Record summary:
The record gives the reactivity of an RNA of 207 nucleotides to 2A3. The data come from the RNA Mapping Database (RMDB), library OK3TST. Reactivities are given for positions 27 through 156.
[RMDB]
RNA sequence: GGGAACGACUCGAGUAGAGUCGAAAAGUCACGAGGAGACUCGUGACAGCAUGCUUCGGCAUGCAAGGGUCGGCAUGGCAUCUCCACCUCCUCGCGGUCCGACCUGGGCAUCCGAAGGAGGACGCACGUCCACUCGGAUGUCUAAAGGAGAGCCAAACUAUACGGUCCUAUUCGUAGGACCGUAUAGAAAAGAAACAACAACAACAAC
Reactivity to 2A3 in 0.01 (KOAc 150mM, MgCl2 10mM, bicine 150mM(pH8.5), 24C), signal-to-noise 2, nucleotides 027 to 156: g000u000c000a000c000g000a000g020g020a100g020a050c000u010c000g000u000g000a000c000a000g000c000a000u000g000c000u060u040c230g110g000c020a000u010g030c020a030a090g020g000g000u000c000g000g020c130a150u140g020g000c040a190u030c000u000c010c000a010c000c010u070c000c010u070c020g050c070g000g000u010c000c000g000a000c000c010u010g000g000g000c000a000u000c000c000g040a100a080g080g060a190g010g010a030c060g090c120a150c250g020u000c000c000a010c000u000c000g000g000a010u000g010u000c000u000a000a000a010g000g000a000g000a000g010c000c000a040a020a010